[RMDB]
RNA sequence: GGGAACGACUCGAGUAGAGUCGAAAAGUCUUUCUGAGCCAAAAGUUCAGGUGAAUGAUGCCUGGCUCGAGACCAUUCAAUCUCAUGAUCUCAUGAUUAUAACGAUGAUGAUGAUGAUGUCGGACCAGGCUUCAUUCCCCUCAACUUACACGUUUUGACGAGCUAGCUUGUUCGCAAGCUAGCUCGUAAAAGAAACAACAACAACAAC
Reactivity to 2A3 in 0.01 (KOAc 150mM, MgCl2 10mM, bicine 150mM(pH8.5), 24C), signal-to-noise 1, nucleotides 027 to 156: g080u020c020u030u180u050c040u150g030a000g000c040c060a030a150a070a000g020u030u040c010a000g000g010u000g040a000a000u000g000a030u020g000c010c000u000g000g040c030u000c000g050a060g000a010c020c010a040u140u140c060a080a090u000c000u000c000a000u000g110a000u040c050u060c070a070u140g160a090u070u270a080u170a170a030c120g040a000u110g030a000u010g000a000u090g010a000u060g050a010u050g070u030c040g000g010a010c000c010a010g000g000c000u010u000c000a020u000u000c000c000c000c000u000c000a000a000c000u000u040a110c190a000c130g070u080u000u000u190g050
The data come from the RNA Mapping Database (RMDB), library PDB130. Chemical mapping of a 207-nucleotide RNA with 2A3.